Conditions: 150 mM KOAc, 10 mM MgCl2 and 150 mM bicine (pH 8.5), 24 C. Structure probing data (DMS and 2A3) for a 177-nucleotide construct. Values cover nucleotides 27 to 126. For 2A3, 1,796 sequencing reads were counted. 2A3 adducts were read by reverse transcription with SuperScript II with manganese. Source: RMDB library M2PK50, as collected in RNAgym. As a SHAPE reagent, 2A3 marks flexible, mostly unpaired nucleotides at the ribose 2'-OH. For DMS the reverse transcriptase was MarathonRT.
RNA sequence: GGGAACGACUCGAGUAGAGUCGAAAACUCGAAUCUUUCGAGAUUCGAGACUCUCGAAGUGUCAAUAAGAUCGAAAAGAUCGCCGUGCAUAAAAUAGACACAAUGCUGCUUGAUUCGUCAAGCAGAAGUUCCAUGGUUCAUUCGUGAACCAUGGAACAAAAGAAACAACAACAACAAC
Reactivity to DMS in 0.01 (KOAc 150mM, MgCl2 10mM, bicine 150mM(pH8.5), 24C), signal-to-noise 1, nucleotides 027 to 126: c000u000c000g020a010a010u000c020u020u000u040c100g020a020g020a010u010u000c010g030a010g010a110c120u000c020u010c000g040a120a070g010u000g010u010c020a090a050u010a090a110g010a010u010c010g000a110a010a100a140g000a010u000c010g010c220c110g010u010g000c090a080u000a040a040a040a060u000a050g010a030c000a000c010a110a140u010g000c010u000g000c010u010u000g000a010u000u000c240g010u010c080a000a000g000c000a000g000a020a040
Reactivity to 2A3 in 0.01 (KOAc 150mM, MgCl2 10mM, bicine 150mM(pH8.5), 24C), signal-to-noise 2, nucleotides 027 to 126: c010u010c000g010a000a010u010c020u030u090u210c270g060a000g010a000u000u010c000g000a010g020a020c040u000c000u000c010g050a300a060g000u010g010u000c010a060a120u080a190a070g000a000u000c030g010a070a240a090a090g010a000u010c000g020c030c010g160u160g040c000a100u150a130a190a080a020u110a120g010a000c010a010c020a030a080u120g010c000u000g000c010u010u010g010a030u040u050c230g010u000c070a020a000g000c000a000g000a010a010